[RMDB]
RNA sequence: GGGAACGACUCGAGUAGAGUCGAAAAGAUCGCGUUGACGUUAUGCCUGGUAAAGAAAUUACCGUUGCGGAAAGCGUGUUAGAGCGGCAGGGUACAAAAUCACUGGUUGCCCAGGGCAAGCUAACCGUAAAAGAUAACGGAGAGCUAAACGAUAAGACCAGUCACCUAAAUUCGUUUAGGUGACUGGAAAAGAAACAACAACAACAAC
Reactivity to DMS in 0.01 (KOAc 150mM, MgCl2 10mM, bicine 150mM(pH8.5), 24C), signal-to-noise 1, nucleotides 027 to 156: g000a070u000c010g070c020g070u000u000g000a090c050g000u010u010a040u000g000c020c070u010g010g020u000a070a080a090g070a110a110a240u000u010a020c000c060g010u000u000g050c020g010g000a040a230a050g070c020g010u000g000u030u010a050g050a060g010c040g010g000c000a110g000g000g120u000a300c020a040a050a100a120u010c040a000c000u020g070g010u000u000g010c050c000c020a110g040g030g000c020a040a050g020c010u000a110a290c000c000g030u000a050a060a050a210g050a070u010a090a000c000g040g000a210g010a080g000c110u020a010a020a040c010g000a050u000a020a170g000a180
Reactivity to 2A3 in 0.01 (KOAc 150mM, MgCl2 10mM, bicine 150mM(pH8.5), 24C), signal-to-noise 2, nucleotides 027 to 156: g040a100u120c050g000c020g040u050u050g080a060c090g000u000u000a030u060g150c050c070u050g030g020u040a020a080a060g080a040a120a000u030u030a060c010c010g090u110u090g030c000g000g040a100a040a000g050c030g010u050g040u090u090a080g000a000g060c000g040g000c000a040g030g000g020u060a020c050a090a190a010a030u120c020a240c130u020g030g050u130u070g020c030c000c000a050g020g050g010c020a040a000g000c010u020a090a000c020c000g000u030a000a000a000a160g090a010u020a050a000c010g000g000a160g000a000g100c030u070a000a130a000c060g040a040u010a150a020g030a040